[RMDB]
RNA sequence: GGGAACGACUCGAGUAGAGUCGAAAAAUACAGCGUAAUCGAGCGGAGGAAAACGGCACUCCGAAAAUCCGGUACGAUUAUGAUGCCACUGCGUCGACGCUAGAUGCAGAACCGGAUUGCCGAGGAAGGCAAACUAUAAAUUCGUUUAUAGUUUGCCAAAAGAAACAACAACAACAAC
Reactivity to DMS in 0.01 (KOAc 150mM, MgCl2 10mM, bicine 150mM(pH8.5), 24C), signal-to-noise 7, nucleotides 027 to 126: a090u020a140c080a050g020c030g020u000a060a050u000c030g020a170g020c030g010g000a050g010g010a060a050a090a120c060g010g010c060a070c070u010c010c010g000a040a050a070a050u000c020c010g020g010u000a130c080g010a060u000u010a050u000g000a090u000g010c040c100a220c010u000g000c040g020u010c010g010a120c200g010c150u000a090g010a030u000g010c000a020g000a130a060c060c000g000g000a020u000u000g010c050c020g010a100g010g010a110a110
Reactivity to 2A3 in 0.01 (KOAc 150mM, MgCl2 10mM, bicine 150mM(pH8.5), 24C), signal-to-noise 6, nucleotides 027 to 126: a010u150a030c060a020g010c020g030u050a060a070u090c040g030a050g110c020g020g020a020g030g040a030a140a060a060c020g020g000c020a010c040u020c020c010g020a050a030a000a000u010c010c000g000g030u070a050c050g020a030u100u110a090u290g140a050u110g070c040c010a070c020u010g000c010g010u000c010g030a040c060g020c190u060a040g010a020u030g000c000a000g010a050a020c000c000g000g010a020u010u030g000c000c010g020a040g080g060a060a080